[RMDB]
RNA sequence: GGGAACGACUCGAGUAGAGUCGAAAAAUUAUCUCGAUGAUCGUAUCGACGAUAUUCACCUUCUUGCUGGCGGGCCUUUCGAGGUCCGUUUUCUCAGGUCAUUGAGCUUUUUGUGCCGUUUCGGUCUCGAGUCUCAUCAUUUCGAUGAUGAGACUCGAAAAGAAACAACAACAACAAC
Reactivity to 2A3 in 0.01 (KOAc 150mM, MgCl2 10mM, bicine 150mM(pH8.5), 24C), signal-to-noise 1, nucleotides 027 to 126: a000u010u000a000u000c000u000c000g000a030u020g030a190u100c030g170u220a000u060c030g000a080c160g000a000u000a000u000u040c000a300c020c000u120u140c070u040u040g020c000u000g000g000c020g010g000g100c030c000u080u230u270c300g050a020g000g000u000c000c000g000u000u000u000u000c000u000c000a020g030g010u020c010a100u000u200g000a020g010c030u170u090u000u000u110g040u130g000c000c060g070u090u090u000c100g000g000u050c000u070

The data come from the RNA Mapping Database (RMDB), library RFM100.
Structure probing data (2A3) for a 177-nucleotide construct.
For 2A3 the reverse transcriptase was SuperScript II with manganese.